[RMDB]
RNA sequence: GGGAACGACUCGAGUAGAGUCGAAAAUCCUAUCUCUGGUUUGUGCGUGGAUCUGAGGCCAUCACAACCGUCCACUACACGACCACCCAAUGGCUUUAGAUUCACGCACAAACUCGCGAUCUGUCUAUCAGUUGUACUUUUUCGAAAGUACAACUGAAAAAGAAACAACAACAACAAC
Reactivity to DMS in 0.01 (KOAc 150mM, MgCl2 10mM, bicine 150mM(pH8.5), 24C), signal-to-noise 5, nucleotides 027 to 126: u000c000c000u000a030u000c020u010c010u010g000g000u000u000u000g010u000g000c050g030u000g000g010a000u000c000u000g000a010g010g010c000c000a020u000c130a070c180a080a100c170c090g020u000c030c080a110c110u030a130c180a080c120g000a060c030c070a110c040c040c070a160a030u000g000g000c000u000u000u000a010g000a010u000u000c000a010c010g000c020a000c010a010a000a020c010u000c280g020c240g000a010u000c120u020g000u000c120u000a170
Reactivity to 2A3 in 0.01 (KOAc 150mM, MgCl2 10mM, bicine 150mM(pH8.5), 24C), signal-to-noise 5, nucleotides 027 to 126: u010c000c000u000a010u020c010u000c000u020g010g000u000u000u000g010u000g010c000g000u000g000g010a000u000c000u000g000a000g000g020c010c000a030u050c060a040c050a100a100c040c000g010u020c020c040a140c050u210a070c070a020c100g040a030c010c020a050c020c020c010a010a020u010g000g000c000u000u000u010a000g000a010u010u000c000a000c000g000c000a000c000a000a000a000c000u000c000g000c010g000a010u010c080u180g090u050c020u040a140
The data come from the RNA Mapping Database (RMDB), libraries RFM100 and RFMREP. Structure probing data (DMS and 2A3) for a 177-nucleotide construct. DMS adducts were read by reverse transcription with MarathonRT. Values cover nucleotides 27 to 126. 2A3 adducts were read by reverse transcription with SuperScript II with manganese.